[RMDB]
RNA sequence: GGGAACGACUCGAGUAGAGUCGAAAAGAAAGAAAGAAAGAAAAGAUCCUGCUGUUUCUACCAUUAGUUUUGAAUGUUUAUUGUAAAGAUACUUUUCAACUCUAAUGGGAGAGACAGCAGGAUUCAACCUGUACCAAUGUUUCGACAUUGGUACAGGAAAAGAAACAACAACAACAAC
Reactivity to 2A3 in 0.01 (KOAc 150mM, MgCl2 10mM, bicine 150mM(pH8.5), 24C), signal-to-noise 4, nucleotides 027 to 126: g090a010a080a010g100a050a100a000g100a060a100a010g060a040a110a000a010g050a010u000c000c000u000g000c010u000g010u020u000u000c010u020a030c000c000a000u000u000a010g000u010u000u000u030g010a020a030u030g060u120u210u080a050u080u080g110u170a100a170a120g090a040u050a030c010u110u150u000u020c000a000a000c000u000c000u010a000a000u000g000g000g000a010g000a000g000a000c000a000g000c000a000g000g000a000u000u000c000a000a000
Reactivity to DMS in 0.01 (KOAc 150mM, MgCl2 10mM, bicine 150mM(pH8.5), 24C), signal-to-noise 2, nucleotides 027 to 126: g010a080a060a150g010a040a090a120g010a100a040a090g000a090a050a150a140g000a010u010c000c020u010g010c000u000g000u000u000u000c000u000a010c000c010a010u010u000a000g000u000u000u000u000g010a010a010u000g000u020u040u010a010u010u010g020u060a080a140a150g000a020u030a000c090u000u000u000u000c000a000a020c020u000c010u000a000a000u000g000g000g010a010g020a010g010a000c000a000g000c010a000g010g000a000u010u000c020a060a130